Overview: The data come from the RNA Mapping Database (RMDB), library TTRDEL. Structure probing data (DMS and 2A3) for a 177-nucleotide construct. For DMS the reverse transcriptase was MarathonRT. Reactivities are given for positions 27 through 126. The 2A3 profile rests on 2,564 reads. The reactions ran in a buffer of 150 mM KOAc, 10 mM MgCl2 and 150 mM bicine (pH 8.5), at 24 C.

[RMDB]
RNA sequence: GGGAACGACUCGAGUAGAGUCGAAAAGAUAUGGACUGUCCAUGCAGCGACGAAGUCGGAAACGACAGAGCUGGUGGCAGUCCUAAGUCACAAAACGCGUAGACAGUCUUCGGACUGUCUACGCGAAGAGAAAGAAAGGGUUCGCCCUUUCUUUCUCAAAAGAAACAACAACAACAAC
Reactivity to DMS in 0.01 (KOAc 150mM, MgCl2 10mM, bicine 150mM(pH8.5), 24C), signal-to-noise 4, nucleotides 027 to 126: g000a030u000a300u010g010g010a010c000u000g000u020c010c000a010u010g000c000a020g020c010g000a140c250g000a080a140g000u010c010g000g000a090a090a200c010g010a010c010a030g010a220g020c000u000g000g010u000g000g000c010a010g010u000c000c000u000a020a040g000u000c020a130c140a060a080a090a160c040g020c000g020u000a000g000a010c000a000g000u000c000u000u010c240g020g010a020c000u000g000u000c000u000a010c010g000c000g000a010a030
Reactivity to 2A3 in 0.01 (KOAc 150mM, MgCl2 10mM, bicine 150mM(pH8.5), 24C), signal-to-noise 2, nucleotides 027 to 126: g020a030u080a040u040g010g000a000c000u040g110u230c020c020a030u300g300c000a000g000c000g300a300c080g110a300a000g030u010c010g010g000a060a140a040c000g030a000c000a000g040a000g030c000u010g010g030u000g000g000c000a000g010u010c000c000u000a000a020g000u010c000a020c070a140a200a150a130c010g010c020g010u000a010g000a000c000a020g010u000c020u100u260c300g000g010a010c000u020g000u010c010u010a000c000g000c010g000a000a000